Structure probing data (2A3 and DMS) for a 177-nucleotide construct.
The 2A3 profile rests on 3,810 reads.
For 2A3 the reverse transcriptase was SuperScript II with manganese.
Conditions: 150 mM KOAc, 10 mM MgCl2 and 150 mM bicine (pH 8.5), 24 C.
RNA sequence: GGGAACGACUCGAGUAGAGUCGAAAACUCUCCGCUGCCAGGGUCGCAAGCACUAAGUUCACGAUGAGACGGUGUCGUUCGUAAUCGAGCGUUGUCGCGAUCAGGAUGUCGUCCAUGUAGAUGUAGACACUCCACCAGUAUUCGUACUGGUGGAGUGAAAAGAAACAACAACAACAAC
Reactivity to 2A3 in 0.01 (KOAc 150mM, MgCl2 10mM, bicine 150mM(pH8.5), 24C), signal-to-noise 3, nucleotides 027 to 126: c010u000c010u020c020c040g030c080u050g010c020c020a070g000g000g060u040c020g010c040a050a070g050c010a020c040u110a120a070g050u090u090c030a030c130g070a050u110g040a010g020a080c030g040g080u060g030u050c020g020u050u000c020g050u130a070a120u160c030g000a010g010c020g060u080u090g130u110c050g000c020g000a030u020c020a030g080g060a030u060g030u040c010g020u000c020c000a010u080g080u100a050g030a170u100g070u110a040g010a080
Reactivity to DMS in 0.01 (KOAc 150mM, MgCl2 10mM, bicine 150mM(pH8.5), 24C), signal-to-noise 3, nucleotides 027 to 126: c080u000c020u010c040c070g000c070u000g000c040c050a090g000g000g020u000c040g020c080a110a100g020c060a050c060u000a070a090g010u010u010c050a060c060g010a090u010g010a140g000a040c050g010g020u000g000u000c010g000u010u000c050g020u000a110a090u000c050g000a050g030c050g000u000u000g010u000c040g000c040g020a050u010c030a070g010g000a060u000g020u010c040g020u010c010c020a050u000g010u000a060g000a090u000g000u000a060g000a290